[RMDB]
Chemical mapping of a 207-nucleotide RNA with DMS and 2A3. For DMS, 2,707 sequencing reads were counted. Conditions: 150 mM KOAc, 10 mM MgCl2 and 150 mM bicine (pH 8.5), 24 C.

RNA sequence: GGGAACGACUCGAGUAGAGUCGAAAAGCGUACUACCUAGCGGGAAAGUGGAGCUUGGAUUUAUACUGAAACUGAUCCCAAAUAGGAUCAGGAGUACGGUAUUGUCAGCUCCAUAACACGCUAGGUAUCGCAAAAGCACACGACUUCGGUCGUGUGCGUAUGAUGAAGCCUUCGGGCUUCAUCAUACAAAAGAAACAACAACAACAAC
Reactivity to DMS in 0.01 (KOAc 150mM, MgCl2 10mM, bicine 150mM(pH8.5), 24C), signal-to-noise 2, nucleotides 027 to 156: g020c040g000u010a060c090u000a020c000c010u000a010g030c000g000g030g020a030a090a180g040u000g010g010a040g050c030u000u000g030g010a100u000u010u000a010u000a020c000u000g000a250a090a300c000u010g010a040u000c010c010c040a060a210a250u010a060g020g030a020u000c000a020g010g020a050g020u000a170c130g040g000u000a030u000u010g000u010c030a090g010c010u000c010c030a010u000a000a300c040a070c000g000c020u010a010g020g000u000a000u020c030g000c030a090a100a120a140g040c000a000c000a010c000g040a060c010u000u020c300g070g000u000c010g030u000g000u000g010c020
Reactivity to 2A3 in 0.01 (KOAc 150mM, MgCl2 10mM, bicine 150mM(pH8.5), 24C), signal-to-noise 3, nucleotides 027 to 156: g000c000g020u080a090c010u000a010c020c010u010a000g000c010g000g010g070a020a160a160g050u010g000g000a020g020c020u070u090g080g000a020u070u300u020a040u010a020c030u020g030a000a040a010c000u000g000a000u030c040c020c020a240a300a200u300a140g000g000a010u000c000a000g010g000a000g000u010a020c120g000g000u010a000u000u030g010u000c000a000g000c000u020c000c000a000u000a000a010c020a020c010g000c000u000a000g010g000u010a000u010c010g000c010a080a080a000a000g000c000a000c010a000c000g040a010c030u060u180c300g100g000u000c000g000u000g000u000g000c010